[RMDB]
RNA sequence: GGGAACGACUCGAGUAGAGUCGAAAACGGAAACCAUCCUCCUCUAAGGCGUAUUGGGCAUGCGAAAGGAUGGGCAUGCGAAAGGAUGGUUAAUCCAUCCGAAACGUACGACGGUCACGAGCAUUGCUCGUCUACGUGAGACGUACGGAAACCAUCCCCUUACGCUGCCUUUCGAGGCAGCGUAAGGAAAAGAAACAACAACAACAAC
Reactivity to 2A3 in 0.01 (KOAc 150mM, MgCl2 10mM, bicine 150mM(pH8.5), 24C), signal-to-noise 1, nucleotides 027 to 156: c030g000g000a000a230a030c000c000a000u000c000c010u110c000c000u000c000u020a050a100g140g000c100g140u130a190u140u130g090g010g070c010a000u000g050c030g080a100a030a090g000g000a000u000g000g000g000c030a000u040g000c020g130a030a030a030g000g010a000u010g000g000u010u020a030a010u000c010c010a000u030c000c020g000a040a170a000c000g000u000a030c010g000a010c080g080g010u070c080a000c000g030a000g010c080a300u190u300g000c020u000c000g060u000c060u040a090c030g120u020g000a000g050a080c080g000u020a050c040g000g000a100a000a000c000c000a000u000c000c010